The record gives the reactivity of an RNA of 207 nucleotides to 2A3. The RNA was probed in 150 mM KOAc, 10 mM MgCl2 and 150 mM bicine (pH 8.5) at 24 C. Reactivities are rounded to 0.1 and cut off at 0 and 3.
RNA sequence: GGGAACGACUCGAGUAGAGUCGAAAAAUGGCAGAGCGGCUACAGAGGAGGAGCUCUUUAUUGUGGGAGGUGUCUGGAACUGCAGGAAGGUCAGCAGCGCAGUGGGGCGCAACCCCAGCCAGCUGGCAGUUAGGGCUGGGCUGGGCGCCAUCCGCCACUAUUUAUCCCUCUUCGGAGGGAUAAAUAGAAAAGAAACAACAACAACAAC
Reactivity to 2A3 in 0.01 (KOAc 150mM, MgCl2 10mM, bicine 150mM(pH8.5), 24C), signal-to-noise 1, nucleotides 027 to 156: a000u050g020g000c030a020g020a030g020c010g030g000c030u100a050c080a030g020a030g030g040a020g000g000a000g000c030u050c000u100u190u080a150u100u120g020u100g010g000g000a040g010g000u050g020u010c000u000g030g000a070a050c020u080g000c040a020g010g070a100a010g040g010u020c010a020g000c000a020g000c020g000c050a090g060u080g050g020g020g000c060g020c050a040a130c030c000c000c000a000g000c020c000a010g040c000u040g060g040c020a020g010u160u180a070g050g000g030c000u020g000g000g050c000u040g000g020g000c020g010c000c000a040u040c000c010g000c010c010a010